[RMDB]
This 177-nucleotide RNA was probed chemically with 2A3 and DMS. 2A3 adducts were read by reverse transcription with SuperScript II with manganese. For DMS, 2,594 sequencing reads were counted. The 2A3 profile rests on 515 reads.

RNA sequence: GGGAACGACUCGAGUAGAGUCGAAAAUCAAGUAUUAAAAGUUAAAAUAGUAGAACUUUUAUAGAUAACGAUUUGGAUUUUGUAGACGAGGAGGAUAGUGAUCGAAUCAGAUCGGCGGAUGCUAUCCUACCAGAUCGUAGUUCGCUACGAUCUGGUAAAAAGAAACAACAACAACAAC
Reactivity to 2A3 in 0.01 (KOAc 150mM, MgCl2 10mM, bicine 150mM(pH8.5), 24C), signal-to-noise 2, nucleotides 027 to 126: u030c020a000a040g040u020a090u200u070a000a020a000a000g000u000u000a040a200a170a250u220a170g070u140a070g080a060a020c010u010u000u000u000a100u030a000g070a150u120a080a050c020g020a030u020u020u040g210g000a060u000u070u010u260g070u080a050g000a140c040g040a080g130g070a000g000g000a020u010a000g040u110g120a010u050c030g000a080a110u160c060a160g070a200u060c040g000g000c050g220g000a000u030g000c000u000a000u000c000c000
Reactivity to DMS in 0.01 (KOAc 150mM, MgCl2 10mM, bicine 150mM(pH8.5), 24C), signal-to-noise 2, nucleotides 027 to 126: u010c020a100a150g010u020a070u010u030a000a000a000a000g000u000u010a090a080a080a140u080a200g000u050a150g000a040a010c000u000u000u000u000a010u010a110g030a100u040a090a070c130g000a030u000u000u020g000g000a050u010u010u010u000g000u000a050g030a120c130g000a120g020g050a040g000g020a010u000a010g010u000g000a040u020c010g000a070a090u030c200a090g010a070u000c050g030g020c120g010g000a090u040g010c000u000a000u000c000c020